[RMDB]
RNA sequence: GGGAACGACUCGAGUAGAGUCGAAAAGUGCCGUCGAUCACAUUAAGUGACCGUUUCGAAGCAUCGGCACAGAUGCCAAUCGGUACCGGGAAGUGGCCGGCUGGUACUCCACUUCACCUAAUGGAUCCACCACCUGCGUAUUCGUACGCAGGUGGUGAAAAGAAACAACAACAACAAC
Reactivity to 2A3 in 0.01 (KOAc 150mM, MgCl2 10mM, bicine 150mM(pH8.5), 24C), signal-to-noise 3, nucleotides 027 to 126: g020u040g040c000c000g000u030c000g030a020u000c030a050c040a110u160u190a180a140g100u060g190a030c000c020g030u060u120u080c040g030a100a010g000c000a020u000c020g250g000c180a010c020a100g000a000u010g000c020c010a030a050u030c010g040g000u040a160c020c030g050g070g000a150a080g010u040g000g000c020c000g030g010c010u070g020g010u040a000c010u040c000c000a050c030u080u090c060a150c100c020u040a210a150u070g070g000a060u040c090